[RMDB]
RNA sequence: GGGAACGACUCGAGUAGAGUCGAAAACGAGGAGAGUCAAGAAUUCGCCGGCCGCAACCUCCAGCGAAACAUCGUUCAGCGCCACGUAGGAGCCGAAGACUUUCCUUACAGUGUCGAUAGUUAUGGGAAGCGAGGCUAUGGCCAUCUUGAUACCGGCACCCAGGCAUAAUUUCGAUUAUGCCUGGGUAAAAGAAACAACAACAACAAC
Reactivity to 2A3 in 0.01 (KOAc 150mM, MgCl2 10mM, bicine 150mM(pH8.5), 24C), signal-to-noise 2, nucleotides 027 to 156: c030g010a070g030g030a030g000a010g040u020c020a040a030g050a080a120u160u070c080g020c080c020g050g020c010c020g030c030a050a040c000c000u030c030c060a040g000c020g040a050a080a050c060a070u100c030g070u140u080c070a040g050c020g010c020c020a040c070g040u040a060g000g040a010g030c050c100g070a080a000g110a170c020u050u040u040c000c010u020u060a020c020a050g050u040g070u110c020g030a030u120a150g020u070u060a020u080g020g000g050a040a000g020c040g020a010g000g000c020u030a040u050g000g000c020c010a020u020c000u030u030g000a010u060a050c010c000g030g000c040
Reactivity to DMS in 0.01 (KOAc 150mM, MgCl2 10mM, bicine 150mM(pH8.5), 24C), signal-to-noise 1, nucleotides 027 to 156: c090g020a190g030g000a130g020a120g010u000c030a070a080g010a100a240u020u010c070g010c040c020g030g000c060c010g020c060a110a060c040c050u010c000c070a150g010c070g020a100a130a110c040a110u000c040g040u000u000c000a100g010c040g020c020c030a070c090g030u010a100g040g000a080g000c000c000g010a080a070g000a050c040u000u000u000c040c000u010u030a090c100a070g000u000g000u000c080g010a180u000a090g010u000u000a050u010g010g020g010a070a090g020c010g010a120g010g020c040u030a120u010g000g010c000c030a080u010c020u000u010g010a100u010a080c030c000g000g030c100
Notes
The record gives the reactivity of an RNA of 207 nucleotides to 2A3 and DMS. DMS adducts were read by reverse transcription with MarathonRT. For 2A3 the reverse transcriptase was SuperScript II with manganese. The 2A3 profile rests on 1,558 reads. Values are in units of 0.01, from 0 to 300, in steps of 10.